[RMDB]
RNA sequence: GGGAACGACUCGAGUAGAGUCGAAAAGGGGUCUGUUGUGGGCAGCGACAUGCUCUAUACUGAAGCCUCCACGGUAUGAGAGCAACAGCGCUGCCGUAACAUCAACAGACGGAGGCACCCAAAGUCAAACGAGUUACUUCGGUAACUCGUUUGACAACGGAAUACGACACUUCGGUGUCGUAUUCCGAAAAGAAACAACAACAACAAC
Reactivity to 2A3 in 0.01 (KOAc 150mM, MgCl2 10mM, bicine 150mM(pH8.5), 24C), signal-to-noise 1, nucleotides 027 to 156: g140g040g000g010u000c010u020g000u020u000g020u060g000g060g000c000a000g010c020g110a200c140a200u040g000c000u000c000u000a000u000a000c000u000g040a130a030g000c020c000u000c000c000a030c000g000g020u000a010u070g290a070g000a000g090c000a060a080c110a110g140c010g000c040u010g000c000c000g000u000a000a000c020a080u170c000a000a000c000a000g000a000c000g000g000a000g010g000c010a050c000c000c000a090a070a030g010u000c000a000a000a000c000g000a000g020u000u000a000c010u020u220c300g050g000u010a010a010c000u000c000g000u000u000u000g000a000c000a000a010
Description: Conditions: 150 mM KOAc, 10 mM MgCl2 and 150 mM bicine (pH 8.5), 24 C. The record gives the reactivity of an RNA of 207 nucleotides to 2A3. It was measured as part of the RMDB library RNAMAK. For 2A3, 1,450 sequencing reads were counted.